[RMDB]
RNA sequence: GGGAACGACUCGAGUAGAGUCGAAAAGACUACCAGUUCGCUGGUAGUCAAAGGGAAACGCGAAGGCGGCGGCGUCCGCCGUAACAAACGCAAAAAGAAAAAAAAGACGAAGCUUCGGCUUCGUCAAGUUAUAGCGUACGUUCGCGUACGCUAUAACAAAAGAAACAACAACAACAAC
Reactivity to 2A3 in 0.01 (KOAc 150mM, MgCl2 10mM, bicine 150mM(pH8.5), 24C), signal-to-noise 2, nucleotides 027 to 126: g000a000c000u000a020c000c000a020g000u030u090c230g050c080u000g000g000u000a000g000u000c000a010a010a000g030g010g020a060a070a030c090g010c050g120a180a070g000g020c030g010g010c020g060g010c040g160u230c000c020g010c000c000g000u000a000a000c000a010a040a000c010g040c050a000a070a020a060a020g140a100a020a030a010a010a000a010a020g020a000c000g020a000a000g010c000u060u140c290g090g010c020u010u000c000g010u000c000a000a000
Reactivity to DMS in 0.01 (KOAc 150mM, MgCl2 10mM, bicine 150mM(pH8.5), 24C), signal-to-noise 2, nucleotides 027 to 126: g000a010c000u000a000c010c010a000g010u000u010c300g030c000u000g000g010u010a010g010u010c000a000a020a070g020g010g000a070a080a070c080g030c060g010a150a120g030g040c020g000g010c000g020g010c070g000u010c010c010g000c010c000g010u010a020a100c100a010a040a050c000g020c020a030a090a060a140a110g040a050a010a020a030a100a090a140a160g000a020c000g010a000a010g010c000u000u010c230g020g010c000u000u000c000g010u000c000a010a040